[RMDB]
RNA sequence: GGGAACGACUCGAGUAGAGUCGAAAAGACCGUUGUGUGUUACAUUGUGCUAAUUUCAAUGUAUUGUUUGCUAUGACCAUGCCUAAGACUUGUUUCGGACCCAUAGUCCGAAAGAUCUUUGUUGAUGAGACCUUUCUGUUCGCAGAAAGGAAAAGAAACAACAACAACAAC
Reactivity to 2A3 in 0.01 (KOAc 150mM, MgCl2 10mM, bicine 150mM(pH8.5), 24C), signal-to-noise 2, nucleotides 027 to 129: g040a000c000c040g000u050u060g070u020g000u000g030u040u040a020c000a000u040u000g070u060g100c060u200a140a180u070u130u120c030a040a010u030g010u040a040u040u140g090u040u080u040g110c020u020a040u110g010a020c040c030a010u060g020c010c000u030a040a030g000a050c050u080u050g050u150u070u010c030g040g000a010c000c000c150a150u170a040g000u000c000c000g010a000a000a000g010a000u000c050u060u020u070g050u010u030g040a090u030g050a000g040a010
Reactivity to DMS in 0.01 (KOAc 150mM, MgCl2 10mM, bicine 150mM(pH8.5), 24C), signal-to-noise 6, nucleotides 027 to 129: g020a170c030c040g060u020u030g020u010g050u040g020u000u000a100c030a060u030u020g020u010g050c200u060a030a020u000u000u000c000a000a000u000g020u030a140u040u050g030u050u010u010g020c060u040a080u040g000a090c120c050a080u040g040c050c040u000a050a090g010a080c110u050u020g030u000u020u010c050g040g000a060c020c080c230a100u040a120g020u010c000c000g010a010a010a040g030a070u030c050u030u030u010g020u020u010g000a040u000g000a100g000a190
This 170-nucleotide RNA was probed chemically with 2A3 and DMS. It was measured as part of the RMDB library 15KLIB. Values cover nucleotides 27 to 129. For DMS, 23,189 sequencing reads were counted. DMS adducts were read by reverse transcription with MarathonRT. The reactions ran in a buffer of 150 mM KOAc, 10 mM MgCl2 and 150 mM bicine (pH 8.5), at 24 C.